[RMDB]
RNA sequence: GGGAACGACUCGAGUAGAGUCGAAAACGAUGCGCCCCAGGACAGCCGCAUCUUCCUUGUCAGCGUGGAAGGUAACAGUGUACCCCUCACACCCUGUGGGCUGUGGCACCCCAAGGACCAUCUGCCAGGUUGAAGAAAGUUUCGACUUUCUUCAACCAAAAGAAACAACAACAACAAC
Reactivity to DMS in 0.01 (KOAc 150mM, MgCl2 10mM, bicine 150mM(pH8.5), 24C), signal-to-noise 3, nucleotides 027 to 126: c120g000a050u010g010c040g000c040c020c000c060a090g000g010a130c130a120g030c090c040g020c080a030u000c020u000u010c000c020u000u010g010u000c110a060g040c090g000u010g020g000a050a040g010g010u000a060a080c090a040g020u000g010u010a190c040c020c030c030u000c030a100c100a120c070c060c030u000g010u000g000g020g010c030u000g030u010g000g000c050a080c040c010c000c060a090a070g010g020a120c040c020a040u000c020u000g000c040c030a090
Reactivity to 2A3 in 0.01 (KOAc 150mM, MgCl2 10mM, bicine 150mM(pH8.5), 24C), signal-to-noise 1, nucleotides 027 to 126: c050g020a040u060g000c000g040c020c010c000c050a030g050g120a050c050a030g040c030c010g040c020a000u010c000u000u000c000c000u040u120g130u130c090a080g010c020g060u020g010g060a110a030g040g000u060a090a020c020a090g060u040g060u250a140c020c000c000c000u020c010a040c010a010c000c000c020u020g040u160g000g000g030c010u010g030u030g040g000c010a080c030c020c030c010a000a000g040g030a050c000c020a040u040c030u030g000c000c010a020